[RMDB]
RNA sequence: GGGAACGACUCGAGUAGAGUCGAAAACGCGGAUACUUCGGUAUCCGCGAAAGAAGCGAAGGCGUAGCGAAAUAAAACGGUAAUAAAUCGCAAAACGCCUAAAAAGCCUAGACUUCGGUCUAGGCAACCUACCCCAUGUGUUCGCACAUGGGGUAGGAAAAGAAACAACAACAACAAC
Reactivity to DMS in 0.01 (KOAc 150mM, MgCl2 10mM, bicine 150mM(pH8.5), 24C), signal-to-noise 1, nucleotides 027 to 126: c000g000c020g000g020a010u000a000c000u010u030c190g040g000u000a000u000c000c010g060c030g030a030a030a060g000a100a160g020c220g000a080a070g060g040c000g040u000a090g020c000g000a030a090a140u000a090a050a180a220c110g020g000u020a070a170u000a040a050a160u000c000g000c000a030a030a090a000c000g020c000c000u010a000a030a090a110a060g000c000c000u000a010g010a000c000u000u000c160g020g030u010c000u000a010g030g010c000a000a000